[RMDB]
RNA sequence: GGGAACGACUCGAGUAGAGUCGAAAAGAUAUGGAGGCGUAGGCUCAAUGAUGCGUAACAUCAAUCGGAAACGAUUGUGGUUGAGAGCUCAAGCCUCCUAAGUCAAACCCCAUCUUCGGAUGGGGAACCUAUCUCAACUGUUCGCAGUUGAGAUAGGAAAAGAAACAACAACAACAAC
Reactivity to 2A3 in 0.01 (KOAc 150mM, MgCl2 10mM, bicine 150mM(pH8.5), 24C), signal-to-noise 6, nucleotides 027 to 126: g030a020u070a040u170g000g010a010g000g020c040g060u260a020g030g000c020u010c050a100a280u260g090a080u170g080c140g130u160a040a040c020a160u210c030a010a020u010c020g020g020a100a040a010c010g000a010u000u010g020u070g070g030u050u050g100a090g000a000g100c010u020c080a000a000g000c000c000u000c000c000u010a000a010g000u000c000a020a000a090c000c000c010c020a010u000c000u050u050c280g200g000a010u010g010g000g000g000a000a000
Reactivity to DMS in 0.01 (KOAc 150mM, MgCl2 10mM, bicine 150mM(pH8.5), 24C), signal-to-noise 4, nucleotides 027 to 126: g010a030u000a300u010g000g020a000g020g000c000g010u000a280g010g000c020u000c010a100a150u010g000a110u010g010c110g000u010a030a120c110a060u000c000a020a010u010c000g010g000a100a130a170c010g000a010u000u010g040u000g000g000u000u000g010a130g010a010g000c010u000c030a280a300g000c010c010u000c000c000u000a000a090g000u000c030a090a130a140c000c000c000c000a000u000c000u000u010c260g020g000a010u000g000g010g010g000a000a030
Chemical mapping of a 177-nucleotide RNA with 2A3 and DMS. DMS adducts were read by reverse transcription with MarathonRT. The data come from the RNA Mapping Database (RMDB), library TTRDEL. The reactions ran in a buffer of 150 mM KOAc, 10 mM MgCl2 and 150 mM bicine (pH 8.5), at 24 C. For 2A3 the reverse transcriptase was SuperScript II with manganese.